[RMDB]
RNA sequence: GGGAACGACUCGAGUAGAGUCGAAAACAAUGGGAAAAACGUAACUGCAAACGACGAUACGUUCGCACUGGCAGCCUAAGGGCCGCCGUCCUCUGCCUAGUUUACUGACGGGCUAGAGUCGCAAGACCGGUAGCAAUACCGACAGAGGUCAUAUACGCCUUAUAGCUGACUUCGGUCAGCUAUAAGGAAAAGAAACAACAACAACAAC
Reactivity to DMS in 0.01 (KOAc 150mM, MgCl2 10mM, bicine 150mM(pH8.5), 24C), signal-to-noise 2, nucleotides 027 to 156: c070a130a120u010g000g010g000a070a060a070a050a120c020g010u010a040a080c080u000g000c020a080a070a080c040g030a130c040g050a300u000a090c070g000u000u000c030g000c000a080c070u010g060g020c020a030g020c030c000u050a070a120g040g000g040c000c020g090c000c010g040u000c000c000u000c000u000g000c010c000u000a060g030u000u000u000a060c010u000g010a040c040g000g030g010c030u020a060g030a090g010u000c040g050c070a180a120g000a080c000c000g010g000u010a010g030c060a040a110u000a060c030c020g020a000c020a050g030a040g030g000u000c020a120u000a130u000a060c070g000
Reactivity to 2A3 in 0.01 (KOAc 150mM, MgCl2 10mM, bicine 150mM(pH8.5), 24C), signal-to-noise 5, nucleotides 027 to 156: c040a040a120u180g040g000g100a050a080a030a020a000c040g030u050a080a050c070u050g020c070a070a080a060c050g090a020c070g060a080u050a140c030g030u020u040c060g000c050a040c120u050g000g000c000a010g010c000c000u110a150a120g060g000g000c010c010g010c020c010g030u010c010c000u010c000u000g000c000c010u010a050g010u010u060u130a210c160u200g130a060c090g010g000g000c000u010a000g010a010g030u010c000g000c040a090a000g000a010c000c000g010g000u000a000g020c010a050a070u010a030c000c000g000a000c010a000g010a010g000g000u010c020a010u090a010u020a150c050g020